[RMDB]
Structure probing data (2A3) for a 177-nucleotide construct.
Conditions: 150 mM KOAc, 10 mM MgCl2 and 150 mM bicine (pH 8.5), 24 C.
Source: RMDB library M2PK50, as collected in RNAgym.
RNA sequence: GGGAACGACUCGAGUAGAGUCGAAAAGAGUCCUAUUUCGAUAGGACUCAACAAAAAUCAGCGGUAAAUAAUUAGCUGGCGUUACCGCUGAACGCCAGCAUACUAGCCUCGUCUUCGGACGAGGCAACCACUCCUGGUAGUUCGCUACCAGGAGUGGAAAAGAAACAACAACAACAAC
Reactivity to 2A3 in 0.01 (KOAc 150mM, MgCl2 10mM, bicine 150mM(pH8.5), 24C), signal-to-noise 2, nucleotides 027 to 126: g020a000g010u020c000c000u000a010u020u100u060c210g060a030u010a030g000g020a000c010u000c010a000a000c000a010a130a000a020a020u030c000a000g030c020g180g200u260a040a120a040u080a040a120u190u210a050g020c000u010g000g000c000g000u010u010a130c000c000g000c000u000g000a000a000c000g030c010c010a000g000c000a020u090a060c070u080a040g000c000c000u010c000g000u050c000u050u050c160g060g000a000c000g000a000g030g000c010a000a000